[RMDB]
RNA sequence: GGGAACGACUCGAGUAGAGUCGAAAACGCAGAAGCACAGCGCGGCGUGCAGGGCCUUGGCCACGUGCGCCGCGGCCAGCCGUGCGGUGCCGCGCCCGCAGCGCCGGACCCACACGCAGGCCACCAGCGUGCCCGCGGCUGCCGAGGCCAGCGCUGCAUCUGAGCUAAAUUUCGAUUUAGCUCAGAUAAAAGAAACAACAACAACAAC
Reactivity to DMS in 0.01 (KOAc 150mM, MgCl2 10mM, bicine 150mM(pH8.5), 24C), signal-to-noise 1, nucleotides 027 to 156: c000g000c080a050g040a250a140g010c040a060c040a040g000c030g020c010g050g000c040g050u000g000c050a080g010g060g010c000c040u010u010g040g000c020c000a030c090g080u010g000c130g070c050c010g030c050g010g000c000c030a110g040c020c000g020u000g000c030g030g010u000g000c010c010g000c030g030c030c060c110g080c020a110g050c000g000c020c040g000g020a090c020c010c000a080c010a100c030g060c000a040g020g030c030c020a300c120c030a200g000c080g030u000g000c000c010c000g000c040g010g010c020u000g090c050c040g010a050g000g000c000c040a240g010c020g030c000u010g010c020
Reactivity to 2A3 in 0.01 (KOAc 150mM, MgCl2 10mM, bicine 150mM(pH8.5), 24C), signal-to-noise 3, nucleotides 027 to 156: c080g020c020a050g060a190a020g030c000a020c020a080g000c010g000c010g020g000c070g060u100g010c130a130g030g050g010c020c040u130u150g030g000c060c090a100c120g100u120g050c190g020c020c040g000c000g000g000c000c000a010g020c020c020g080u020g000c010g010g000u000g030c010c000g000c000g020c000c010c020g000c020a010g000c020g050c020c010g170g070a300c000c010c000a020c000a010c030g000c010a020g050g020c040c010a070c050c060a050g090c040g150u130g000c040c030c000g020c020g000g020c080u090g040c060c060g040a090g000g000c010c010a000g010c000g000c010u000g000c010